Conditions: 150 mM KOAc, 10 mM MgCl2 and 150 mM bicine (pH 8.5), 24 C.
The record gives the reactivity of an RNA of 177 nucleotides to DMS and 2A3.
The data come from the RNA Mapping Database (RMDB), library OK1LIB.

RNA sequence: GGGAACGACUCGAGUAGAGUCGAAAAUAUGAGAGAUCACCAUGUUUGAACUCAGAGCAUGAAUCCUCUGGAAUGAUAGAUGAAUAGCGGAGGAGACUUUAAACACUACACGUAUGUCGCUUAGAAAGGGUAAACUAAAGUUCGCUUUAGUUUACCCAAAAGAAACAACAACAACAAC
Reactivity to DMS in 0.01 (KOAc 150mM, MgCl2 10mM, bicine 150mM(pH8.5), 24C), signal-to-noise 4, nucleotides 027 to 126: u020a040u030g010a070g000a120g000a060u010c060a100c110c050a050u040g010u000u000u030g020a120a160c090u010c050a070g010a080g000c070a080u010g010a120a150u000c080c020u000c010u020g000g020a110a060u030g010a080u080a080g020a110u030g020a090a050u020a080g010c020g030g040a070g000g000a040g000a110c080u000u000u010a080a100a070c070a100c030u000a040c080a100c030g000u030a050u030g020u000c050g000c050u020u020a130g010a050a080a120
Reactivity to 2A3 in 0.01 (KOAc 150mM, MgCl2 10mM, bicine 150mM(pH8.5), 24C), signal-to-noise 4, nucleotides 027 to 126: u240a050u050g030a020g000a000g030a030u060c020a020c090c010a000u030g070u000u020u110g090a100a050c040u050c160a040g010a010g000c000a000u040g020a050a050u030c020c010u030c010u020g020g090a130a050u100g090a040u050a150g110a060u120g050a130a020u100a100g080c050g020g000a030g040g020a040g000a010c010u060u150u110a040a090a010c050a010c030u080a020c070a000c020g070u060a020u150g040u030c000g020c080u040u020a050g160a070a120a040